RNA sequence: GGGAACGACUCGAGUAGAGUCGAAAAGAUAUGGAUAGUUCGGUAUCGAGGAGUAUAUCGGAAACGAUAUUUUUCUCCUAAGACAGUACCGAGACUAUCCUAAGUCAAAUCCGUCUUCGGACGGAAAGCCUUCAUACUAGUUCGCUAGUAUGAAGGCAAAAGAAACAACAACAACAAC
Reactivity to DMS in 0.01 (KOAc 150mM, MgCl2 10mM, bicine 150mM(pH8.5), 24C), signal-to-noise 3, nucleotides 027 to 126: g000a040u000a300u000g000g040a000u000a000g000u000u000c000g000g000u000a010u000c110g030a020g010g040a010g010u000a040u000a010u010c020g020g000a140a080a150c010g010a010u000a000u000u000u020u020u030c000u000c000c010u000a180a140g020a080c300a090g010u000a010c000c010g000a000g000a010c000u000a000u010c000c000u020a010a100g010u000c050a100a090a140u020c000c000g000u000c000u000u040c220g010g000a010c000g010g000a010a040a080
Reactivity to 2A3 in 0.01 (KOAc 150mM, MgCl2 10mM, bicine 150mM(pH8.5), 24C), signal-to-noise 2, nucleotides 027 to 126: g000a010u030a000u130g000g000a000u010a010g010u000u010c010g000g000u030a040u130c160g160a090g020g000a010g020u020a000u010a000u000c000g000g010a060a010a000c030g000a000u000a030u040u200u020u140u060c020u000c010c000u040a130a090g180a060c100a060g040u000a000c000c000g000a040g030a010c000u000a000u000c000c000u000a040a000g020u000c000a000a060a200u020c020c000g010u000c010u030u070c300g150g000a000c000g020g000a090a000a010